Overview:
Source: RMDB library OK1LIB, as collected in RNAgym. This 177-nucleotide RNA was probed chemically with 2A3. The RNA was probed in 150 mM KOAc, 10 mM MgCl2 and 150 mM bicine (pH 8.5) at 24 C.
[RMDB]
RNA sequence: GGGAACGACUCGAGUAGAGUCGAAAAGCGACGUUGAUCCGCUGCUCGUCAUUCUACGAGGAGUUGCCGUCGACACGCCAGGUGGAGGUUCCGGAGGCAGGAGCGGGUCGAUCUCCUCGGUGAGGGAGGUAUGAUCGCCCUUCGGGGCGAUCAUACCAAAAGAAACAACAACAACAAC
Reactivity to 2A3 in 0.01 (KOAc 150mM, MgCl2 10mM, bicine 150mM(pH8.5), 24C), signal-to-noise 1, nucleotides 027 to 126: g050c030g060a060c040g090u070u300g060a120u010c030c000g000c000u010g100c010u000c000g010u040c000a270u130u000c000u030a100c010g010a000g020g020a020g040u020u010g120c030c030g090u040c000g000a000c000a020c070g090c000c010a040g060g000u070g050g090a030g000g000u140u010c050c010g000g000a030g020g020c000a000g010g010a030g000c050g030g000g000u060c000g000a030u030c000u000c000c000u030c020g100g010u220g010a200g000g030g000a000